Source: RMDB library OK1LIB, as collected in RNAgym. The record gives the reactivity of an RNA of 177 nucleotides to DMS and 2A3. For DMS, 6,356 sequencing reads were counted. DMS adducts were read by reverse transcription with MarathonRT. The reactions ran in a buffer of 150 mM KOAc, 10 mM MgCl2 and 150 mM bicine (pH 8.5), at 24 C. Reactivities are given for positions 27 through 126.

RNA sequence: GGGAACGACUCGAGUAGAGUCGAAAAGAAGAGAAUAAGCGCGGAUAUAUCUGUCGGUAGAGCCGCAGGACCGACACCUGCGAGUACAGGGAUCAAGACCCUGUUCGCGCAAAGAUUGAAGUAGAAGAUGCUAUAUGGGUUUCGACCCAUAUAGCAUAAAAGAAACAACAACAACAAC
Reactivity to DMS in 0.01 (KOAc 150mM, MgCl2 10mM, bicine 150mM(pH8.5), 24C), signal-to-noise 4, nucleotides 027 to 126: g020a120a080g000a130g000a100a070u000a100a150g000c040g000c000g010g000a060u020a110u020a040u010c030u010g000u030c100g010g010u010a090g000a090g010c030c010g000c020a020g000g000a130c030c030g010a050c030a060c050c030u000g000c010g000a070g030u000a100c000a020g000g010g010a090u020c270a080a220g000a110c010c000c000u000g010u000u000c000g000c010g030c000a070a090a080g020a100u010u000g000a030a180g020u000a050g000a150a090g000
Reactivity to 2A3 in 0.01 (KOAc 150mM, MgCl2 10mM, bicine 150mM(pH8.5), 24C), signal-to-noise 4, nucleotides 027 to 126: g110a010a010g080a010g030a060a100u260a200a040g020c020g010c010g010g030a000u020a000u020a050u120c060u070g140u070c050g050g070u090a030g000a000g080c000c020g030c010a000g030g020a150c020c020g040a010c000a030c020c000u000g000c000g010a020g030u040a020c010a010g040g010g000a030u160c140a110a000g060a100c000c000c000u010g000u010u000c010g010c000g020c000a010a020a000g070a030u090u120g070a090a010g020u080a020g050a130a010g050